[RMDB]
RNA sequence: GGGAACGACUCGAGUAGAGUCGAAAAACUCAAGGCCGAUUUGGUGCAGCUCGGUGGUCGCUCCUGGGCGCAGUUCAUCUUCACCACCCCCGGUCAAGGCGACGACCUGCGCCGCGAACUGCUGAUGGCGGCCAUUAAAUUUCGAUUUAAUGGCCGCAAAAGAAACAACAACAACAAC
Reactivity to 2A3 in 0.01 (KOAc 150mM, MgCl2 10mM, bicine 150mM(pH8.5), 24C), signal-to-noise 2, nucleotides 027 to 126: a000c010u000c040a090a080g070g000c000c070g200a290u070u110u300g010g020u210g080c020a060g050c010u030c030g100g100u250g020g010u060c040g030c000u050c000c000u000g040g020g000c010g000c000a050g010u130u070c010a050u040c050u170u000c010a030c020c000a050c030c010c000c000c000g010g000u000c020a030a050g030g000c090g000a070c090g020a000c030c020u010g000c000g000c010c010g030c000g010a030a010c050u070g020c010u060g050a100u200g100
Reactivity to DMS in 0.01 (KOAc 150mM, MgCl2 10mM, bicine 150mM(pH8.5), 24C), signal-to-noise 1, nucleotides 027 to 126: a050c000u000c010a300a020g040g000c000c030g000a190u010u010u010g000g010u020g000c100a280g000c000u000c000g000g020u010g000g010u000c000g060c000u000c000c070u020g000g000g010c000g040c010a000g010u010u000c000a050u000c090u010u010c230a120c150c090a100c050c010c000c000c110g000g020u060c160a020a080g020g010c020g020a100c220g030a020c090c010u000g000c000g000c000c060g020c160g000a200a070c060u020g000c020u000g000a110u100g050